This 177-nucleotide RNA was probed chemically with 2A3 and DMS. The data come from the RNA Mapping Database (RMDB), libraries RFM100 and RFMREP. For DMS the reverse transcriptase was MarathonRT. Conditions: 150 mM KOAc, 10 mM MgCl2 and 150 mM bicine (pH 8.5), 24 C.

RNA sequence: GGGAACGACUCGAGUAGAGUCGAAAAGGCCUGAGGAAUGGCUCCUCUGUUUAUAACACACCCAAUAUAAACCUGGUCAUGAUGUGAGGAGGGCUACAAAGUUUGUUGCCGUCCCCCAAACACAUGUAACACAUCAGCAAUUCGUUGCUGAUGUGUUAAAAGAAACAACAACAACAAC
Reactivity to 2A3 in 0.01 (KOAc 150mM, MgCl2 10mM, bicine 150mM(pH8.5), 24C), signal-to-noise 3, nucleotides 027 to 126: g120g010c000c070u050g050a050g050g050a120a100u170g070g000c030u020c000c000u000c020u010g050u040u080u000a140u010a040a020c040a000c000a040c070c000c030a030a000u180a010u030a040a110a010c030c020u080g000g010u100c040a030u060g130a050u060g040u050g010a050g010g000a050g000g010g020c010u040a000c010a010a130a100g100u140u160u050g020u000u070g020c000c030g160u060c000c000c000c000c030a020a070a000c040a000c010a050u070g040u060
Reactivity to DMS in 0.01 (KOAc 150mM, MgCl2 10mM, bicine 150mM(pH8.5), 24C), signal-to-noise 2, nucleotides 027 to 126: g000g040c010c010u010g000a040g000g050a070a130u010g000g050c040u030c000c000u010c000u000g000u000u010u010a030u010a000a070c120a090c170a040c030c020c010a150a050u020a050u020a000a070a080c040c300u000g000g000u010c030a010u010g020a050u010g000u020g040a100g000g020a000g000g020g000c090u000a030c020a020a130a130g050u040u000u000g000u000u000g060c020c010g050u070c000c000c060c010c010a030a090a210c080a070c030a000u000g030u000